[RMDB]
RNA sequence: GGGAACGACUCGAGUAGAGUCGAAAACUUCUUACUCACCCACACCACGAGACGGUGGUAGAUCACGUACGUGCCCACGAGGGCGAGAAGGAAGAUGAAGAGGAUCAUGUAGGCAGAGACCUCGGGGUCGACCCCCAUAUUUCGAUAUGGGGGUCGAAAAAGAAACAACAACAACAAC
Reactivity to DMS in 0.01 (KOAc 150mM, MgCl2 10mM, bicine 150mM(pH8.5), 24C), signal-to-noise 2, nucleotides 027 to 126: c040u000u000c020u000u000a170c000u000c020a050c020c010c000a150c060a130c190c010a020c000g000a210g000a040c060g010g010u010g010g000u010a040g000a120u010c050a030c040g000u020a090c050g010u000g000c000c080c140a160c080g000a090g010g020g000c020g010a020g000a080a090g000g020a040a040g020a080u030g000a100a090g020a050g000g010a200u000c040a030u020g020u000a030g000g000c040a100g000a080g000a110c020c020u000c020g010g000g010g010
Reactivity to 2A3 in 0.01 (KOAc 150mM, MgCl2 10mM, bicine 150mM(pH8.5), 24C), signal-to-noise 1, nucleotides 027 to 126: c000u060u020c000u030u040a110c020u000c020a000c010c040c020a020c000a020c050c030a040c000g190a170g080a260c060g140g100u070g000g010u070a040g070a080u120c020a010c090g050u090a000c020g000u050g010c000c020c000a150c100g040a120g020g020g000c080g000a010g000a010a000g050g030a020a050g010a060u090g080a020a090g020a050g090g000a070u040c010a050u130g060u090a060g140g000c030a000g020a020g000a230c010c000u010c010g030g030g000g040
Structure probing data (DMS and 2A3) for a 177-nucleotide construct. The 2A3 profile rests on 1,162 reads. For 2A3 the reverse transcriptase was SuperScript II with manganese. The RNA was probed in 150 mM KOAc, 10 mM MgCl2 and 150 mM bicine (pH 8.5) at 24 C. For DMS, 1,300 sequencing reads were counted. For DMS the reverse transcriptase was MarathonRT.